[RMDB]
RNA sequence: GGGAACGACUCGAGUAGAGUCGAAAAACCUUAUUUUGAGAAGCUGAGGGAUUUGGCCGAUAGAAGCUUCAGCAACCGACUUUAAAUAGCACGGUGCUAAUACCAACGAGCAACUCGAAUGAUAAGUAAAACGUUGACAAGUUCGCUUGUCAACGAACAACAAUCCUUUGUUCGCAAAGGAUUGUUGAAAAGAAACAACAACAACAAC
Reactivity to 2A3 in 0.01 (KOAc 150mM, MgCl2 10mM, bicine 150mM(pH8.5), 24C), signal-to-noise 4, nucleotides 027 to 156: a000c020c000u050u080a140u000u060u040u090g040a020g010a040a010g000c030u040g040a080g040g080g000a080u120u090u120g040g010c020c010g020a050u060a140g160a120a020g040c000u200u150c020a000g000c000a010a040c000c010g040a000c000u130u080u180a140a210a300u180a070g010c010a010c060g020g010u010g000c000u010a030a020u030a090c010c000a060a030c060g100a020g020c010a000a080c000u010c050g020a020a040u020g080a050u070a120a010g040u070a010a110a060a020c020g000u010u010g000a000c010a000a000g000u020u090c130g060c170u000u010g000u000c000a000a000c010g000a000a000
Reactivity to DMS in 0.01 (KOAc 150mM, MgCl2 10mM, bicine 150mM(pH8.5), 24C), signal-to-noise 1, nucleotides 027 to 156: a090c040c000u000u000a090u010u000u010u000g010a090g000a030a300g010c030u000g010a100g010g000g000a200u000u040u000g020g000c010c030g010a220u000a150g010a160a050g000c080u000u030c070a090g000c020a050a010c000c000g020a030c000u010u020u040a050a110a070u000a010g010c010a050c020g020g010u000g000c010u000a070a070u010a080c000c020a080a180c070g000a040g020c020a040a230c000u000c000g010a000a050u010g020a130u000a040a140g000u000a050a040a080a180c040g020u000u000g020a020c000a020a020g010u000u000c300g020c000u000u010g060u000c010a000a000c000g020a000a090

The record gives the reactivity of an RNA of 207 nucleotides to 2A3 and DMS. Source: RMDB library M2RFPK, as collected in RNAgym. For DMS, 2,195 sequencing reads were counted. For DMS the reverse transcriptase was MarathonRT.